[RMDB]
RNA sequence: GGGAACGACUCGAGUAGAGUCGAAAAGAUAUGGAGCAGGAUGACAUGCCUACUCGGAAACGAGCGGGCAACAGCAUCUGCUCCUAAGUCAAAGCAACAAUCUCCGCUUCGGCGGAGAUUGUUGCAAGCUAAAAACAUGGUUCGCCAUGUUUUUAGCAAAAGAAACAACAACAACAAC
Reactivity to 2A3 in 0.01 (KOAc 150mM, MgCl2 10mM, bicine 150mM(pH8.5), 24C), signal-to-noise 2, nucleotides 027 to 126: g030a010u080a020u140g010g010a010g000c050a030g080g300a120u010g070a110c040a130u060g010c000c000u000a050c000u020c010g010g010a070a070a040c020g000a010g020c060g000g020g000c020a020a030c050a020g000c000a020u000c000u000g000c000u010c000c010u010a070a000g010u000c030a150a040a030g000c000a010a000c010a000a000u040c000u000c000c000g030c040u080u120c300g150g000c000g020g020a010g010a020u000u000g010u010u000g000c000a000a010
Reactivity to DMS in 0.01 (KOAc 150mM, MgCl2 10mM, bicine 150mM(pH8.5), 24C), signal-to-noise 2, nucleotides 027 to 126: g010a040u010a300u000g000g010a010g010c010a020g040g000a030u000g000a050c100a280u010g010c000c000u000a070c000u010c000g000g000a080a080a150c020g010a020g010c030g020g000g010c000a000a020c250a150g010c000a020u000c000u000g010c010u000c000c000u000a000a080g000u000c020a080a120a190g000c000a020a010c000a010a000u000c000u000c000c000g010c000u000u020c220g020g000c000g010g000a000g000a000u000u000g010u000u000g000c000a010a010
This 177-nucleotide RNA was probed chemically with 2A3 and DMS. 2A3 adducts were read by reverse transcription with SuperScript II with manganese. Values cover nucleotides 27 to 126. For DMS, 2,553 sequencing reads were counted.